[RMDB]
RNA sequence: GGGAACGACUCGAGUAGAGUCGAAAAAAGAAUCAACCUGAAUACAUUGAAGAGAUACUUGCUUAUCACAAAGCCAAUGACAUGACACUAGAAUCUUCUGUAUUCACUCAUAUUCAAUCUCUUCAUACUACCUAUCCUAGUUCGCUAGGAUAGGUAGAAAAGAAACAACAACAACAAC
Reactivity to 2A3 in 0.01 (KOAc 150mM, MgCl2 10mM, bicine 150mM(pH8.5), 24C), signal-to-noise 6, nucleotides 027 to 126: a000a010g060a020a020u060c030a020a050c010c030u020g020a030a010u030a070c040a050u070u170g000a010a000g010a000g020a030u050a120c050u050u050g000c010u060u060a080u170c070a050c090a150a070a010g040c060c030a100a110u090g040a050c030a100u090g030a050c020a020c140u060a070g030a120a070u020c010u050u030c030u110g020u030a010u020u000c000a010c010u050c020a090u100a060u180u030c010a020a090u000c010u000c000u090u050c030a030u050a170
Reactivity to DMS in 0.01 (KOAc 150mM, MgCl2 10mM, bicine 150mM(pH8.5), 24C), signal-to-noise 5, nucleotides 027 to 126: a090a100g010a050a040u020c150a130a100c180c120u000g010a040a010u000a030c030a030u010u020g010a010a020g010a030g000a050u010a060c070u000u000g010c040u010u000a030u000c110a090c140a070a070a140g000c110c160a060a090u010g000a070c130a050u010g000a090c050a030c090u000a050g000a050a070u000c010u010u000c040u000g000u000a020u000u000c000a010c080u000c120a070u000a040u010u000c030a040a080u000c030u000c000u010u010c060a090u010a230

An RNA of 177 nucleotides, treated with 2A3 and DMS and read out base by base. The DMS profile rests on 5,098 reads. It was measured as part of the RMDB library OK2TST.